[RMDB]
RNA sequence: GGGAACGACUCGAGUAGAGUCGAAAAGCGAAACUCCGGCAGAGGCCACGCAUCUGUCAGCAUAGAGGGAGAGCUCGCGUGGCAAUUAUGCUUCGUUUUCUCAAUUCGGAAGCUAUUGACCGCCGAGAUCAUCAUCCUACUUCGGUAGGAUGAUGAUAAAAGAAACAACAACAACAAC
Reactivity to DMS in 0.01 (KOAc 150mM, MgCl2 10mM, bicine 150mM(pH8.5), 24C), signal-to-noise 5, nucleotides 027 to 126: g010c050g000a090a100a130c080u010c080c030g000g030c020a030g010a090g000g020c020c050a050c090g000c030a090u000c030u000g000u000c000a100g010c140a150u040a100g020a120g000g000g010a040g000a030g000c090u030c090g020c070g030u000g000g020c000a070a040u010u030a080u030g000c010u000u000c010g000u010u000u000u020c100u020c150a080a070u010u010c020g000g010a020a020g000c020u000a090u010u010g000a140c060c050g020c000c020g000a030g000
Reactivity to 2A3 in 0.01 (KOAc 150mM, MgCl2 10mM, bicine 150mM(pH8.5), 24C), signal-to-noise 9, nucleotides 027 to 126: g090c050g050a090a040a050c040u050c050c020g010g000c010a020g040a040g070g050c040c020a050c060g030c000a060u010c020u090g300u070c040a050g070c060a090u250a150g110a130g050g060g010a020g010a020g030c030u030c070g010c030g010u010g010g000c000a000a020u170u090a070u230g000c000u010u020c010g060u020u010u100u030c180u070c070a060a150u100u050c040g160g010a010a020g000c020u040a070u030u140g070a120c020c010g000c000c010g040a040g010
Structure probing data (DMS and 2A3) for a 177-nucleotide construct. The RNA was probed in 150 mM KOAc, 10 mM MgCl2 and 150 mM bicine (pH 8.5) at 24 C. It was measured as part of the RMDB library OK1LIB.